An RNA of 177 nucleotides, treated with DMS and 2A3 and read out base by base. For 2A3, 1,261 sequencing reads were counted. The RNA was probed in 150 mM KOAc, 10 mM MgCl2 and 150 mM bicine (pH 8.5) at 24 C. The DMS profile rests on 1,525 reads.
RNA sequence: GGGAACGACUCGAGUAGAGUCGAAAAUGAAAGCGUAUCAGUGAGGCACGGCGAGCGCGGUACCGUAGACACAGUCUUCAUAACGGAGACGAACGAGGGCUUCAAGCUGGUAAAGGUGCGUGUACGCCCAUUGCCCAGUCUUCGGACUGGGCAAUGGAAAAGAAACAACAACAACAAC
Reactivity to DMS in 0.01 (KOAc 150mM, MgCl2 10mM, bicine 150mM(pH8.5), 24C), signal-to-noise 3, nucleotides 027 to 126: u000g000a110a090a120g020c060g000u010a030u010c080a070g000u010g010a150g030g000c050a060c020g000g000c030g000a100g000c120g010c050g050g010u030a030c050c030g000u000a140g010a080c130a090c110a210g010u000c010u000u000c030a110u000a140a180c220g000g000a050g000a050c030g010a070a080c070g000a070g000g000g010c040u000u000c100a070a120g010c040u000g010g000u010a060a080a070g010g020u000g030c050g040u010g010u000a150c100g010c080
Reactivity to 2A3 in 0.01 (KOAc 150mM, MgCl2 10mM, bicine 150mM(pH8.5), 24C), signal-to-noise 1, nucleotides 027 to 126: u190g000a130a040a000g110c080g010u110a030u110c030a030g080u020g220a080g100g000c020a000c090g040g010c040g020a070g000c030g000c010g020g000u000a100c000c040g030u030a010g080a020c030a020c030a140g000u000c000u020u010c010a100u080a250a030c130g000g000a020g010a020c030g020a000a000c000g010a100g000g030g010c000u030u080c020a060a010g010c050u060g000g060u110a170a150a040g110g000u040g000c030g040u040g000u010a010c040g050c000